[RMDB]
This 177-nucleotide RNA was probed chemically with 2A3 and DMS. The 2A3 profile rests on 1,637 reads. Reactivities are given for positions 27 through 126. The RNA was probed in 150 mM KOAc, 10 mM MgCl2 and 150 mM bicine (pH 8.5) at 24 C. 2A3 adducts were read by reverse transcription with SuperScript II with manganese.

RNA sequence: GGGAACGACUCGAGUAGAGUCGAAAAUUCAUGGAGACCCAUCCCACACUGGAUGCCCUACACUGUGACAUCGGCAAUGCCACUGAGUUUUACAAAAUAUUCCAAGAUGAGAUUAGGGAGGUGUCCCCGAUGGGUGGCUAUUCGUAGCCACCCAUCGAAAAGAAACAACAACAACAAC
Reactivity to 2A3 in 0.01 (KOAc 150mM, MgCl2 10mM, bicine 150mM(pH8.5), 24C), signal-to-noise 3, nucleotides 027 to 126: u090u020c040a020u070g060g070a120g000a080c000c000c000a020u050c020c010c000a030c010a010c080u030g060g000a010u050g060c010c000c000u020a010c040a010c040u020g010u050g070a020c030a100u030c030g000g000c020a040a030u120g000c000c000a040c080u040g040a040g040u040u060u050u110a060c060a020a120a050a020u130a120u140u000c000c000a060a030g080a140u170g030a020g080a210u150u140a120g010g000g040a040g000g080u060g020u060c000c000c000
Reactivity to DMS in 0.01 (KOAc 150mM, MgCl2 10mM, bicine 150mM(pH8.5), 24C), signal-to-noise 2, nucleotides 027 to 126: u030u010c080a120u050g000g000a070g000a040c100c010c030a160u010c010c020c000a270c060a040c060u010g010g030a100u000g040c050c010c000u020a020c050a080c050u000g000u000g020a090c030a030u050c100g010g030c030a220a050u000g000c020c010a020c060u010g020a100g000u030u000u040u000a120c170a060a110a020a080u020a100u020u010c010c010a090a030g030a110u020g000a030g000a060u090u000a090g010g010g000a130g000g040u000g020u000c000c000c000